[RMDB]
RNA sequence: GGGAACGACUCGAGUAGAGUCGAAAACGUCAUACUUGGUUACAAUCGUACUUCUAAGGGAUAUGAGACAAUGACGUAAGUUUAGUGUUCCUUGUAUGCGAGGUGCGAGUUGUACACUCAAUCGCAAGGGUUUUUCUAACUUCGGUUAGAAAAACCCAAAAGAAACAACAACAACAAC
Reactivity to 2A3 in 0.01 (KOAc 150mM, MgCl2 10mM, bicine 150mM(pH8.5), 24C), signal-to-noise 1, nucleotides 027 to 126: c000g000u000c080a100u020a260c130u270u210g000g000u060u000a000c010a020a020u000c000g010u010a000c020u000u000c040u240a000a000g010g020g020a000u040a020u000g100a150g010a000c040a010a120u160g000a010c000g000u010a120a000g020u000u000u220a010g040u040g000u000u000c030c030u000u020g250u020a270u130g190c130g000a000g000g000u010g000c000g040a180g000u010u010g000u040a000c040a000c000u100c040a030a190u080c060g080c210a010a010